[RMDB]
RNA sequence: GGGAACGACUCGAGUAGAGUCGAAAAGAUAUGGAGCUUAGACAUGACCCAUACGACGGUCGAUGAAACAGCUCGGAAACGAGCUGUGGAGACCCAAGUAUGGGUCAACAGCUAAGCUCCUAAGUCAGCCAUUAAAUUUGUUCGCAAAUUUAAUGGCAAAAGAAACAACAACAACAAC
Reactivity to DMS in 0.01 (KOAc 150mM, MgCl2 10mM, bicine 150mM(pH8.5), 24C), signal-to-noise 1, nucleotides 027 to 126: g010a100u050a300u020g010g000a000g010c000u010u000a010g020a070c100a300u000g000a010c000c000c000a000u000a000c010g020a300c300g000g000u000c000g040a040u000g070a270a280a000c000a000g010c000u000c000g000g000a060a090a300c000g040a000g020c000u000g010u000g000g000a050g000a010c000c000c000a050a300g010u000a050u000g000g000g000u000c000a000a020c250a090g000c000u000a000a020g000c000u090c000c000u000a000a010g000u010c040a160
Source information
This 177-nucleotide RNA was probed chemically with DMS.